[RMDB]
RNA sequence: GGGAACGACUCGAGUAGAGUCGAAAAGAGCUCUAGAUGCGAUUGUAGACUGUUACAGCAUCUGCUAUCAGUCUGAGAUAGCUCAGGAUAGCUCGAGCUAUCUGCAACGGUGCAGACUCGAGUGACACCGUGAACAAUCGUUCAUGUCACAGAGCAGAGGUACUCAGGGGUUCGCCCCUGAGUACCUAAAAGAAACAACAACAACAAC
Reactivity to 2A3 in 0.01 (KOAc 150mM, MgCl2 10mM, bicine 150mM(pH8.5), 24C), signal-to-noise 1, nucleotides 027 to 156: g040a010g040c010u010c010u010a030g000a020u020g060c000g020a040u000u000g010u010a000g000a060c040u090g000u010u210a030c030a060g030c010a180u080c160u170g000c000u090a080u170c000a000g020u000c000u020g040a010g010a020u030a030g000c010u000c010a010g010g070a300u210a230g020c010u080c170g010a000g000c000u000a000u030c000u070g070c040a060a000c040g000g000u010g000c020a000g000a170c010u130c130g090a050g050u020g010a010c000a000c000c050g030u000g060a000a020c000a000a000u010c000g050u110u190c020a090u070g100u090c020a010c010a090g020a000g070c000a000g070